[RMDB]
Overview:
This 177-nucleotide RNA was probed chemically with 2A3 and DMS. 2A3 adducts were read by reverse transcription with SuperScript II with manganese. For DMS the reverse transcriptase was MarathonRT. Source: RMDB library OK2TST, as collected in RNAgym.

RNA sequence: GGGAACGACUCGAGUAGAGUCGAAAAAUGGACGGUUAUACAGGACAGUACGUUGUGAUAAUGGAUGACUUGGGACAGAACCCGGAUGGUGAAGAUUUCAGAUAUUUUUGUCAGAUGGUAUCCACUACCGGAUGUAAUGAUUCGUCAUUACAUCCGGAAAAGAAACAACAACAACAAC
Reactivity to 2A3 in 0.01 (KOAc 150mM, MgCl2 10mM, bicine 150mM(pH8.5), 24C), signal-to-noise 1, nucleotides 027 to 126: a010u080g000g000a000c000g070g040u030u010a070u010a030c050a030g000g090a010c050a030g030u030a030c010g020u020u030g090u000g100a160u120a220a040u090g000g040a000u020g040a000c000u000u100g080g000g020a020c000a050g050a090a070c000c060c000g020g000a050u040g000g000u060g020a050a020g020a020u100u120u170c080a000g050a110u080a090u100u140u020u030u110g000u040c010a020g000a100u080g020g050u030a060u030c000c010a050c030u060a060
Reactivity to DMS in 0.01 (KOAc 150mM, MgCl2 10mM, bicine 150mM(pH8.5), 24C), signal-to-noise 2, nucleotides 027 to 126: a060u010g010g010a080c090g000g000u010u000a070u010a100c060a060g020g010a070c070a070g020u010a070c080g020u010u000g010u010g010a090u000a070a090u010g000g000a070u000g010a050c040u000u010g010g020g010a120c070a090g000a070a120c110c030c040g010g000a130u000g010g010u000g010a050a050g000a060u000u010u010c130a070g010a050u000a030u000u000u010u020u010g020u000c050a080g000a090u000g020g020u000a090u010c040c050a090c150u010a120